Source information:
This 177-nucleotide RNA was probed chemically with DMS and 2A3. Reactivities are rounded to 0.1 and cut off at 0 and 3. 2A3 is a SHAPE reagent: it acylates the 2'-hydroxyl of flexible nucleotides of all four kinds. Conditions: 150 mM KOAc, 10 mM MgCl2 and 150 mM bicine (pH 8.5), 24 C. Reactivities are given for positions 27 through 126. DMS (dimethyl sulfate) methylates the pairing face of unpaired adenines and cytosines. DMS adducts were read by reverse transcription with MarathonRT.

[RMDB]
RNA sequence: GGGAACGACUCGAGUAGAGUCGAAAAAGAAAGAGCGUAGCACACACUCAGACUAAGUCUGACACACACCUACGCUAAACAUCUUAGUGUGUGAUCGAGAUAUCGAUGUGUCUGUAAGAUGAAAAAAGCUCUCUGUAGGAUUCGUCCUACAGAGAGCAAAAGAAACAACAACAACAAC
Reactivity to DMS in 0.01 (KOAc 150mM, MgCl2 10mM, bicine 150mM(pH8.5), 24C), signal-to-noise 1, nucleotides 027 to 126: a100g000a120a120a070g000a180g010c000g000u000a020g000c020a030c170a010c010a030c000u000c010a000g010a010c030u000a200a190g010u000c000u000g000a020c020a000c000a010c020a000c010c010u000a020c020g000c020u010a040a100a160c010a000u000c000u000u010a010g000u000g020u000g020u020g020a050u000c000g000a030g020a240u000a100u000c010g000a000u000g010u000g040u000c190u000g030u020a030a010g010a040u000g010a010a020a040a100a090a100
Reactivity to 2A3 in 0.01 (KOAc 150mM, MgCl2 10mM, bicine 150mM(pH8.5), 24C), signal-to-noise 1, nucleotides 027 to 126: a000g160a040a060a020g160a020g080c000g010u000a000g060c000a010c000a000c010a000c020u000c050a010g000a010c050u120a150a100g050u020c010u020g010a000c000a000c000a000c000a000c010c000u000a000c010g000c040u030a040a040a040c000a000u000c000u020u030a000g000u000g000u000g000u000g010a030u000c010g020a000g040a180u200a070u240c000g010a000u010g000u000g000u000c000u000g010u000a010a030g030a010u090g020a120a040a000a050a000a010